[RMDB]
RNA sequence: GGGAACGACUCGAGUAGAGUCGAAAAGUAGAAGAUUCGUCUUCUACAAAGCGUACUACACUCGACAUGAGCCCAUAUGAUCUAAUCCCAAAUAGGAUUAGGUUUGUAUGAGCGCUCAACAGCGAGUGUAUCGCAAAUUGCUCACUUCGGUGAGCAAGUUUAUAGCGCGCUUCGGCGCGCUAUAAACAAAAGAAACAACAACAACAAC
Reactivity to 2A3 in 0.01 (KOAc 150mM, MgCl2 10mM, bicine 150mM(pH8.5), 24C), signal-to-noise 2, nucleotides 027 to 156: g000u000a000g000a000a000g020a010u110u070c220g040u030c050u010u000c000u010a010c020a000a130a000g000c000g010u080a020c010u010a020c030a000c010u010c000g220a180c150a180u110g000a000g000c000c000c000a000u000a010u000g000a000u040c000u000a000a010u020c040c020c040a240a300a210u260a120g000g000a000u000u000a000g060g010u000u070u250g000u000a000u010g060a080g030c070g000c020u000c000a020a030c080a020g070c040g000a000g000u000g000u000a000u060c020g020c000a000a090a090u040u020g010c000u000c000a010c000u030u070c220g090g000u000g000a000g000c000a000a000